Structure probing data (DMS and 2A3) for a 177-nucleotide construct.
[RMDB]
RNA sequence: GGGAACGACUCGAGUAGAGUCGAAAAGCUCUCCUGAUGAGCCCAUGGCAGGGCGAAACUAGUGUGGUACGGUAUGGCGAGGCUUGCCUCGGAGCUAUGCGGGAGGGCUCCCGGGGCGCCGCACGGGGCUAACCUUAAACUUCGGUUUAAGGUUAGCAAAAGAAACAACAACAACAAC
Reactivity to DMS in 0.01 (KOAc 150mM, MgCl2 10mM, bicine 150mM(pH8.5), 24C), signal-to-noise 2, nucleotides 027 to 126: g020c020u000c020u000c020c010u040g000a100u000g000a170g010c010c020c020a070u010g000g020c050a090g030g010g000c030g000a070a100a060c050u010a080g010u000g020u000g010g030u000a070c060g020g000u000a080u010g020g000c010g000a200g000g000c000u000u000g000c000c010u020c030g010g000a060g020c010u000a080u010g030c020g010g020g020a050g020g000g000c000u000c010c020c020g010g000g000g010c040g020c040c010g020c050a040c070g010g000g000
Reactivity to 2A3 in 0.01 (KOAc 150mM, MgCl2 10mM, bicine 150mM(pH8.5), 24C), signal-to-noise 3, nucleotides 027 to 126: g000c010u010c000u010c030c010u060g070a130u070g060a020g030c020c010c020a080u070g080g000c020a040g040g030g010c020g000a070a020a020c070u080a070g080u010g020u040g150g120u100a060c070g040g040u130a100u130g060g010c020g030a060g010g080c020u030u110g010c010c020u000c060g010g010a050g010c020u050a050u230g060c050g000g000g010a020g000g000g010c000u040c010c000c010g020g020g000g010c030g010c010c010g020c000a030c020g000g020g060
The DMS profile rests on 2,571 reads. For 2A3 the reverse transcriptase was SuperScript II with manganese.